[RMDB]
RNA sequence: GGGAACGACUCGAGUAGAGUCGAAAAAAAGAUAUGGAAUCUAGACAUGCGUGACCAUGCGAAGAACUAUGUUCGGAAACGAACAUAGGGAGCAUCCCUCACGCAACAGCUAGAUUCCUAAGUCAAAGUAUAUUGAACUCUUCGGAGUUCAAUAUACAAAAGAAACAACAACAACAAC
Reactivity to 2A3 in 0.01 (KOAc 150mM, MgCl2 10mM, bicine 150mM(pH8.5), 24C), signal-to-noise 3, nucleotides 027 to 126: a000a000a000g110a050u110a080u150g000g000a010a010u000c000u010a010g060a110c060a130u120g000c010g020u000g010a030c230c070a040u010g020c000g300a300a020g000a030a030c000u000a010u000g000u010u000c000g040g010a070a040a070c010g000a000a000c000a000u000a010g000g000g000a020g000c000a010u020c010c000c010u040c000a000c020g020c020a040a020c010a020g090c000u000a000g000a010u000u010c000c000u010a060a010g010u000c040a220a020a000
Reactivity to DMS in 0.01 (KOAc 150mM, MgCl2 10mM, bicine 150mM(pH8.5), 24C), signal-to-noise 3, nucleotides 027 to 126: a090a100a100g020a020u000a300u000g000g000a010a000u000c000u020a010g000a090c100a210u000g010c020g030u010g000a010c150c200a030u010g010c050g000a060a120g010a090a220c010u010a000u000g000u000u000c000g000g030a130a080a140c000g000a000a000c010a010u000a010g000g000g000a050g010c010a000u000c140c070c110u000c000a010c000g010c010a020a030c300a160g000c000u000a000g010a040u000u000c000c000u010a010a060g000u010c030a080a090a140